Structure probing data (DMS and 2A3) for a 177-nucleotide construct. The reactions ran in a buffer of 150 mM KOAc, 10 mM MgCl2 and 150 mM bicine (pH 8.5), at 24 C. DMS adducts were read by reverse transcription with MarathonRT. For 2A3 the reverse transcriptase was SuperScript II with manganese. Reactivities are rounded to 0.1 and cut off at 0 and 3.

RNA sequence: GGGAACGACUCGAGUAGAGUCGAAAACAAAGGACGCACGGGAGCCCCACCACACCUAGAGCCACGCUUUGAAGGAUCUGCCAAGCUCACUUUUAAUCAUGAGAAAGAAAUUACCCACAUGGAGUCAUAAGCGUUAAGUGUUCGCACUUAACGCUUAAAAAGAAACAACAACAACAAC
Reactivity to DMS in 0.01 (KOAc 150mM, MgCl2 10mM, bicine 150mM(pH8.5), 24C), signal-to-noise 2, nucleotides 027 to 126: c080a030a100a060g000g010a130c000g070c010a010c070g000g000g000a160g000c030c020c030c030a110c100c030a110c090a060c070c030u020a100g000a060g000c000c030a020c060g030c000u000u010u000g000a140a070g030g000a070u000c010u000g010c030c040a110a100g000c000u000c030a030c040u000u000u070u030a030a060u040c070a040u010g000a140g000a030a080a090g000a070a100a100u010u010a050c010c000c030a070c140a050u040g000g000a070g000u000c070a130
Reactivity to 2A3 in 0.01 (KOAc 150mM, MgCl2 10mM, bicine 150mM(pH8.5), 24C), signal-to-noise 2, nucleotides 027 to 126: c010a000a100a000g000g030a040c010g000c050a000c010g070g030g000a000g030c000c060c000c000a020c000c000a080c000a020c000c030u050a010g000a030g020c090c000a140c040g060c010u070u020u020g040a040a000g070g000a050u000c000u070g020c070c000a020a000g000c000u020c000a070c010u150u030u020u160a110a070u050c100a070u140g030a050g050a050a050a090g030a000a090a000u180u100a060c000c000c000a000c020a200u150g040g010a000g010u010c000a060